[RMDB]
RNA sequence: GGGAACGACUCGAGUAGAGUCGAAAAGAUAAUAAUAAGUCUUUGGCAGGGUUGUUGGUAGGAUUAUCAUGCAGUAAUCUUUGUGACAGUGUUGUGAGUCCUUGCCAUCCUUGAAUCAGCACCAUUAUUUCCAAAGCUUUAGAAGUAAUUUAUUGAAGUAAUGCCUAUAUUUCGAUAUAGGCAUUACAAAAGAAACAACAACAACAAC
Reactivity to DMS in 0.01 (KOAc 150mM, MgCl2 10mM, bicine 150mM(pH8.5), 24C), signal-to-noise 2, nucleotides 027 to 156: g020a080u000a080a160u000a180a150u000a110a300g010u010c010u000u000u010g010g000c030a160g000g000g030u000u010g020u000u020g010g010u000a060g030g000a050u000u000a030u000c050a110u000g020c100a130g030u000a020a040u000c020u000u010u000g040u020g010a050c040a060g000u000g020u010u010g040u000g000a150g000u010c010c010u000u010g020c050c020a090u000c050c020u010u000g010a130a160u000c030a050g010c060a020c030c030a050u000u000a080u000u000u000c020c020a050a070a230g010c130u010u010u000a040g000a020a080g000u000a020a050u010u000u010a090u020u000g000a150a190
Reactivity to 2A3 in 0.01 (KOAc 150mM, MgCl2 10mM, bicine 150mM(pH8.5), 24C), signal-to-noise 2, nucleotides 027 to 156: g000a000u120a160a040u120a130a010u140a180a070g100u060c010u000u020u000g070g010c080a070g050g010g000u070u070g040u080u020g050g050u040a010g000g000a010u020u060a010u160c020a010u110g000c030a010g050u120a070a030u000c030u060u270u260g100u090g040a020c030a070g080u020g030u160u170g010u040g010a010g000u010c000c000u040u040g000c010c010a000u000c000c000u000u010g020a020a020u060c010a020g030c040a020c050c010a060u030u120a070u140u160u080c010c000a040a080a010g010c030u160u080u080a120g090a120a010g060u150a030a100u150u150u220a120u150u290g030a090a010

Conditions: 150 mM KOAc, 10 mM MgCl2 and 150 mM bicine (pH 8.5), 24 C. An RNA of 207 nucleotides, treated with DMS and 2A3 and read out base by base. The DMS profile rests on 3,337 reads. DMS adducts were read by reverse transcription with MarathonRT.